An RNA of 207 nucleotides, treated with 2A3 and DMS and read out base by base. Reactivities are rounded to 0.1 and cut off at 0 and 3. For 2A3, 909 sequencing reads were counted. The RNA was probed in 150 mM KOAc, 10 mM MgCl2 and 150 mM bicine (pH 8.5) at 24 C. 2A3 is a SHAPE reagent: it acylates the 2'-hydroxyl of flexible nucleotides of all four kinds.

[RMDB]
RNA sequence: GGGAACGACUCGAGUAGAGUCGAAAAGUGCCAGGGCUAGGCUUUGUUCCUAUGGCUAGCGAAAGCGAAUACAGGUUAUUAGGCGUCGUGAAAACAAAACUCUUUCGACAUAAGGGAGAGGCUCGUAGAUGAGUUACCCUCCUUUUUAUGGGGUAACCCCUGAGUAUUGGUUCGCCAAUACUCAGGGAAAAGAAACAACAACAACAAC
Reactivity to 2A3 in 0.01 (KOAc 150mM, MgCl2 10mM, bicine 150mM(pH8.5), 24C), signal-to-noise 2, nucleotides 027 to 156: g030u040g000c000c000a070g000g010g030c050u050a030g050g000c000u050u040u130g050u060u060c010c010u030a090u140g000g000c040u040a040g000c030g050a090a020a020g010c000g010a030a000u110a100c020a050g060g060u070u080a040u050u100a060g070g000c030g000u040c010g020u050g060a050a050a010a010c060a030a060a030a070c040u040c020u030u090u040c020g050a020c070a130u130a080a070g010g000g010a020g000a010g010g000c020u010c000g110u060a080g030a250u140g010a050g020u000u030a060c010c010c010u090c010c000u050u130u030u010u040a130u260g000g000g020g000u030a020a050c000
Reactivity to DMS in 0.01 (KOAc 150mM, MgCl2 10mM, bicine 150mM(pH8.5), 24C), signal-to-noise 1, nucleotides 027 to 156: g020u010g070c010c070a120g020g020g020c000u020a050g030g000c010u000u000u000g020u000u000c030c010u000a040u010g010g000c020u010a120g020c030g000a130a090a100g030c050g000a100a090u000a060c040a070g000g010u000u000a030u010u000a080g010g020c030g080u000c050g010u000g000a040a070a050a070c100a040a020a060a110c070u000c060u010u000u000c000g020a070c050a070u020a010a080g000g000g000a040g000a010g010g040c030u000c050g010u000a170g020a160u000g010a040g000u000u000a130c000c030c010u020c050c050u000u000u000u000u000a080u020g010g000g030g020u010a110a050c110